[RMDB]
An RNA of 177 nucleotides, treated with DMS and 2A3 and read out base by base. DMS adducts were read by reverse transcription with MarathonRT. Conditions: 150 mM KOAc, 10 mM MgCl2 and 150 mM bicine (pH 8.5), 24 C.
RNA sequence: GGGAACGACUCGAGUAGAGUCGAAAAAGCCUUCCUGAUGAGUCCGUUCCAAGGAUGAAACCGUCUCUCCUAAUUCCCAGUUUCCAUAGGUUAAUUAUCCUCAUGGAUUACUUCUGGUAACCAGGAGCUAAUCGGUUAUGUUCGCAUAACCGAUUAGAAAAGAAACAACAACAACAAC
Reactivity to DMS in 0.01 (KOAc 150mM, MgCl2 10mM, bicine 150mM(pH8.5), 24C), signal-to-noise 4, nucleotides 027 to 126: a090g000c100c080u000u000c030c020u010g010a110u010g000a070g010u000c050c040g010u000u000c010c040a100a090g010g020a040u000g010a120a100a130c030c030g000u000c040u010c020u000c010c010u000a060a140u000u000c120c000c010a110g010u000u000u000c000c000a020u000a030g000g010u000u010a100a100u010u010a080u000c000c000u000c140a010u000g010g000a030u000u000a070c120u000u000c030u010g000g000u000a060a060c100c040a020g000g000a030g010
Reactivity to 2A3 in 0.01 (KOAc 150mM, MgCl2 10mM, bicine 150mM(pH8.5), 24C), signal-to-noise 3, nucleotides 027 to 126: a010g070c010c020u020u020c000c030u080g080a120u130g010a020g030u090c130c050g000u050u020c020c010a020a010g050g020a070u140g040a110a030a010c040c000g040u000c030u000c010u010c060c010u010a040a070u050u040c020c010c000a030g000u040u040u020c000c000a010u020a000g000g070u050u090a170a060u280u170a160u160c010c010u040c050a020u020g010g000a010u010u090a050c020u010u030c000u020g010g000u030a050a040c050c030a020g000g000a010g000

Overview: Reactivities are given for positions 27 through 126. It was measured as part of the RMDB library VIROID.